[RMDB]
Structure probing data (DMS and 2A3) for a 207-nucleotide construct.
For 2A3, 1,835 sequencing reads were counted.
Conditions: 150 mM KOAc, 10 mM MgCl2 and 150 mM bicine (pH 8.5), 24 C.
For 2A3 the reverse transcriptase was SuperScript II with manganese.
RNA sequence: GGGAACGACUCGAGUAGAGUCGAAAAGUAAUAGAUAAUUGGAUGACGAGAAAGGGUGCGCUGAUAUCCGAUACGAAUGCUAGCAGUAAAUAGAAUAGCGCUCCUAAUACAACUAGCAACAAAAGGAUAAGGUAUCGUGAUGUCAAUCACAUUGCGAAUUACUAGGUGCUUUCGAGCACCUAGUAAUAAAAGAAACAACAACAACAAC
Reactivity to DMS in 0.01 (KOAc 150mM, MgCl2 10mM, bicine 150mM(pH8.5), 24C), signal-to-noise 2, nucleotides 027 to 156: g030u010a060a110u020a110g000a100u010a040a130u010u000g020g020a090u010g000a100c030g040a130g040a080a140a130g000g010g030u010g020c040g030c070u020g010a100u000a030u000c000c010g030a090u000a060c060g030a140a150u000g060c010u000a010g000c020a140g000u000a010a080a180u000a100g000a050a090u000a040g000c080g020c070u010c020c020u000a030a150u000a060c040a070a060c020u010a010g030c000a090a280c120a030a090a060a140g020g000a070u010a060a140g060g000u000a070u000c020g040u000g020a010u010g050u000c030a060a060u020c090a100c050a090u030u000g010c010g000a080
Reactivity to 2A3 in 0.01 (KOAc 150mM, MgCl2 10mM, bicine 150mM(pH8.5), 24C), signal-to-noise 3, nucleotides 027 to 156: g030u030a040a100u060a120g090a060u090a130a090u160u040g050g000a010u020g030a020c080g020a020g090a110a070a020g030g010g010u030g010c000g030c090u040g030a030u010a020u050c000c020g010a000u010a030c040g080a130a060u050g000c000u040a010g000c070a020g070u070a030a070a140u110a060g050a070a050u040a040g030c010g010c050u030c010c000u030a080a020u080a040c010a050a030c000u000a000g000c010a020a060c030a050a140a020a020g050g000a030u050a120a060g090g010u000a010u060c010g030u130g020a010u000g020u030c030a020a020u070c010a020c030a040u030u140g030c030g040a090